Notes: The record gives the reactivity of an RNA of 207 nucleotides to DMS and 2A3. For DMS the reverse transcriptase was MarathonRT. High 2A3 reactivity points to a flexible backbone, as in loops and unpaired stretches. 2A3 adducts were read by reverse transcription with SuperScript II with manganese. The RNA was probed in 150 mM KOAc, 10 mM MgCl2 and 150 mM bicine (pH 8.5) at 24 C. For DMS, 3,706 sequencing reads were counted.

[RMDB]
RNA sequence: GGGAACGACUCGAGUAGAGUCGAAAAUUUUGUGGAGCAUGCUAGUAUAAAUGGUCUUGUGUUUUUAACUUCACAUUCCAAUUUUCUUUGCUAAUAUAUAGGAAAGCAAUUGACUUUUAUACCACCUUUUUCUUCAGACAGAUGGAAUCAAGUGACACCUAAUACGCUCAUUCGUGAGCGUAUUAGGAAAAGAAACAACAACAACAAC
Reactivity to DMS in 0.01 (KOAc 150mM, MgCl2 10mM, bicine 150mM(pH8.5), 24C), signal-to-noise 2, nucleotides 027 to 156: u000u000u010u000g060u000g000g010a090g040c050a030u010g000c030u000a060g010u010a100u000a050a060a080u010g000g020u000c000u010u000g030u000g030u000u000u020u000u000a060a130c050u010u020c030a030c040a120u000u000c060c010a040a100u010u000u020u000c040u010u000u000g000c020u010a050a180u000a130u000a170u010a130g010g000a060a050a070g020c210a010a060u010u010g020a090c050u000u000u000u000a080u010a100c010c020a080c030c000u000u000u000u000u000c050u000u000c060a090g040a090c050a080g010a090u000g010g050a070a130u000c090a050a080g010u000g000a060c050a090
Reactivity to 2A3 in 0.01 (KOAc 150mM, MgCl2 10mM, bicine 150mM(pH8.5), 24C), signal-to-noise 3, nucleotides 027 to 156: u050u060u030u040g020u030g010g000a010g020c040a040u100g010c030u050a040g040u110a070u110a190a090a070u100g010g010u030c030u060u120g020u010g070u030u060u030u070u260a100a060c020u010u060c000a010c000a040u040u040c030c000a080a080u020u040u120u030c010u020u100u030g040c000u030a090a060u040a160u100a040u100a220g070g020a090a060a000g000c010a000a060u040u060g020a040c000u080u060u040u110a070u050a080c000c040a040c040c040u000u070u070u120u110c040u090u080c040a050g000a120c010a020g070a060u080g020g040a030a050u090c050a080a100g100u130g080a010c010a030